Chemical mapping of a 177-nucleotide RNA with DMS and 2A3. It was measured as part of the RMDB library OK1LIB.
RNA sequence: GGGAACGACUCGAGUAGAGUCGAAAAUGACCGCCGGAUAUCUGGCGCGUUGCGCGGGGCGGAUCCCGAAACGCUUCUGGGCUCAGGCUUCCAGCCCGGCACGAUAACCAAAACGGUGAAGCCACGGCACGCCACAUUUUUUCGAAAAUGUGGCGUGAAAAGAAACAACAACAACAAC
Reactivity to DMS in 0.01 (KOAc 150mM, MgCl2 10mM, bicine 150mM(pH8.5), 24C), signal-to-noise 4, nucleotides 027 to 126: u060g010a140c030c000g010c000c010g010g030a140u010a030u020c010u010g030g000c020g010c070g010u030u020g040c030g030c010g020g000g000g010c030g020g010a090u010c010c000c000g010a080a070a120c170g010c070u040u030c040u020g000g010g010c010u000c200a100g010g000c010u000u000c010c000a040g000c010c000c010g000g010c150a150c090g010a050u020a070a140c050c040a080a050a030a020c230g020g000u030g000a010a020g000c000c000a190c180g010g000
Reactivity to 2A3 in 0.01 (KOAc 150mM, MgCl2 10mM, bicine 150mM(pH8.5), 24C), signal-to-noise 3, nucleotides 027 to 126: u180g040a030c000c000g010c000c000g030g030a060u050a030u200c040u110g100g030c020g030c060g100u050u270g060c110g000c000g040g010g000g000c050g030g010a040u040c000c010c000g010a070a060a010c040g020c010u170u040c050u250g000g000g010c010u020c050a130g020g010c000u020u000c000c000a000g000c000c000c000g000g000c030a020c030g050a040u090a080a030c000c030a010a020a030a090c120g040g040u230g030a000a010g020c000c010a040c030g010g020